[RMDB]
RNA sequence: GGGAACGACUCGAGUAGAGUCGAAAACAAAAACCCGACACGGGCGACACAGGCGUUCUAUCGACAAUACAUGCUGCGUCGCGGGCGUCGGAUGCAAGUCACCCGUACACGGAAAGCAGCAGGACGCGCUCCAGCUCCAGUUCGCUGGAGCUGGAGCAAAAGAAACAACAACAACAAC
Reactivity to 2A3 in 0.01 (KOAc 150mM, MgCl2 10mM, bicine 150mM(pH8.5), 24C), signal-to-noise 1, nucleotides 027 to 126: c040a000a110a000a020a160c000c000c000g060a040c000a080c040g060g120g040c080g000a000c000a020c110a110g010g010c010g000u020u010c110u170a090u160c070g080a000c060a000a000u190a300c070a100u090g040c080u110g020c180g000u010c000g010c000g010g060g000c000g070u000c040g040g200a020u150g000c000a100a080g040u020c000a000c000c000c000g000u050a000c100a090c040g000g110a210a000a000g020c050a020g000c010a080g020g100a010c000g000c010
The record gives the reactivity of an RNA of 177 nucleotides to 2A3. The 2A3 profile rests on 426 reads. Values cover nucleotides 27 to 126. 2A3 adducts were read by reverse transcription with SuperScript II with manganese. Values are in units of 0.01, from 0 to 300, in steps of 10. Conditions: 150 mM KOAc, 10 mM MgCl2 and 150 mM bicine (pH 8.5), 24 C.